[RMDB]
RNA sequence: GGGAACGACUCGAGUAGAGUCGAAAAGGGGUCGCACCGACAAGUCGUGUGUUGUCAGCGGAUACAGGCUGAAGCCUCCACGGCCUGUAUUCGCUUGGAUUUACACACGUCACCCGGUGCGACGGAGGCACCCAAAAACUAUGCUUCGGCAUAGUAAUCUUACGUAAACGUUCGCGUUUACGUAAGAAAAAGAAACAACAACAACAAC
Reactivity to DMS in 0.01 (KOAc 150mM, MgCl2 10mM, bicine 150mM(pH8.5), 24C), signal-to-noise 1, nucleotides 027 to 156: g010g030g010g020u010c000g000c000a060c000c000g020a080c090a070a080g020u010c020g030u020g020u000g000u040u010g010u000c050a080g030c000g000g000a020u000a010c010a000g010g020c000u000g000a080a100g030c010c000u020c000c020a300c070g010g000c010c010u000g010u000a010u000u000c000g020c010u000u000g020g000a090u000u010u000a030c020a020c010a010c000g000u000c010a070c150c040c010g010g020u000g000c000g020a000c000g000g020a030g010g040c020a200c010c010c010a000a040a130a180a060c010u000a010u000g030c010u000u010c270g030g010c000a000u000a000g000u020a080a070
Reactivity to 2A3 in 0.01 (KOAc 150mM, MgCl2 10mM, bicine 150mM(pH8.5), 24C), signal-to-noise 3, nucleotides 027 to 156: g080g010g020g000u000c010g030c010a010c000c010g020a030c080a130a120g020u010c000g000u000g000u020g030u040u030g070u080c180a060g000c010g000g010a000u000a000c000a000g000g000c000u010g010a070a020g010c000c000u000c000c000a040c030g000g000c010c000u020g000u020a000u010u010c010g000c000u010u150g010g010a000u040u030u100a000c000a000c000a000c010g010u070c020a220c000c020c000g020g000u000g000c010g000a000c000g000g000a000g010g000c000a060c000c000c000a100a060a030a010a000c000u000a000u000g010c000u040u110c230g070g000c000a000u010a010g000u000a000a110